[RMDB]
RNA sequence: GGGAACGACUCGAGUAGAGUCGAAAACAUCAGCUUGCAGUGCAUCGCGCUCGAUAACGAUAGUUCCAUUACGUACGCCUGGUACACUGACACCUUAGAGAGCGGGGACAACAUCCAACAAGUAACGGUGUCAGCUAAUUUUCGAAUUAGCUGACACAAAAGAAACAACAACAACAAC
Reactivity to 2A3 in 0.01 (KOAc 150mM, MgCl2 10mM, bicine 150mM(pH8.5), 24C), signal-to-noise 3, nucleotides 027 to 126: c020a050u110c040a010g030c010u050u070g000c050a040g050u020g050c010a080u000c040g010c020g050c020u010c050g050a080u050a200a030c030g050a040u040a070g020u060u030c010c000a010u040u150a030c070g000u000a030c040g060c030c040u070g060g000u020a020c050a010c080u040g070a020c020a050c020c010u050u090a020g030a000g010a010g080c050g000g030g010g000a000c020a060a020c010a090u020c050c010a020a040c020a130a060g130u130a080a050c070g080
Reactivity to DMS in 0.01 (KOAc 150mM, MgCl2 10mM, bicine 150mM(pH8.5), 24C), signal-to-noise 3, nucleotides 027 to 126: c070a070u000c040a090g010c040u000u010g010c060a090g040u000g010c080a080u000c030g000c060g000c040u010c020g000a130u000a060a150c080g000a120u000a110g020u010u000c030c040a100u010u010a100c160g040u000a020c100g000c040c040u010g000g000u000a050c070a050c050u000g020a140c060a060c040c060u000u020a100g000a160g000a070g010c070g010g000g020g020a100c030a020a060c100a180u030c040c060a050a090c140a070a050g010u020a060a120c190g020
The data come from the RNA Mapping Database (RMDB), library OK2TST. An RNA of 177 nucleotides, treated with 2A3 and DMS and read out base by base. The RNA was probed in 150 mM KOAc, 10 mM MgCl2 and 150 mM bicine (pH 8.5) at 24 C. DMS (dimethyl sulfate) methylates the pairing face of unpaired adenines and cytosines. For 2A3 the reverse transcriptase was SuperScript II with manganese. For DMS the reverse transcriptase was MarathonRT.